[RMDB]
RNA sequence: GGGAACGACUCGAGUAGAGUCGAAAACAUGAAUGGUCGGCAUCUUAUAGCGCGUGUUUGGGGCGGAGGAAGGUUCUUUACCAACCAGGUCUUACUGCGCUAUAGGGAAGAGAGCUGGCCGUACUGACUGGGACUCUUCAUUCGUGAAGAGUUCCAGAAAAGAAACAACAACAACAAC
Reactivity to 2A3 in 0.01 (KOAc 150mM, MgCl2 10mM, bicine 150mM(pH8.5), 24C), signal-to-noise 9, nucleotides 027 to 126: c040a070u190g140a150a040u130g020g010u010c000g000g000c000a060u020c030u000u010a000u000a000g000c000g010c050g040u040g040u060u120u140g030g010g010g010c050g030g140a110g050g010a040a010g010g010u110u080c060u130u300u180a020c000c000a000a000c000c010a040g100g050u000c010u010u040a010c020u020g000c000g000c000u000a000u000a000g020g010g030a120a030g140a010g020a010g030c000u010g000g000c000c000g000u010a030c030u040g080a040
Reactivity to DMS in 0.01 (KOAc 150mM, MgCl2 10mM, bicine 150mM(pH8.5), 24C), signal-to-noise 5, nucleotides 027 to 126: c050a090u030g000a140a060u030g010g000u000c000g010g020c000a190u020c000u000u000a000u000a000g000c020g030c000g000u010g010u010u050u020g020g000g000g000c010g010g020a250g000g000a010a300g000g000u000u010c300u010u040u050a030c000c000a040a300c000c010a060g010g020u010c010u000u010a050c020u010g000c000g020c000u010a010u000a020g000g000g030a100a070g000a150g010a130g020c010u010g000g000c000c000g010u030a030c050u000g000a220
The data come from the RNA Mapping Database (RMDB), library OK1LIB. Structure probing data (2A3 and DMS) for a 177-nucleotide construct. The RNA was probed in 150 mM KOAc, 10 mM MgCl2 and 150 mM bicine (pH 8.5) at 24 C. The DMS profile rests on 11,039 reads. 2A3 adducts were read by reverse transcription with SuperScript II with manganese. DMS adducts were read by reverse transcription with MarathonRT. Values cover nucleotides 27 to 126.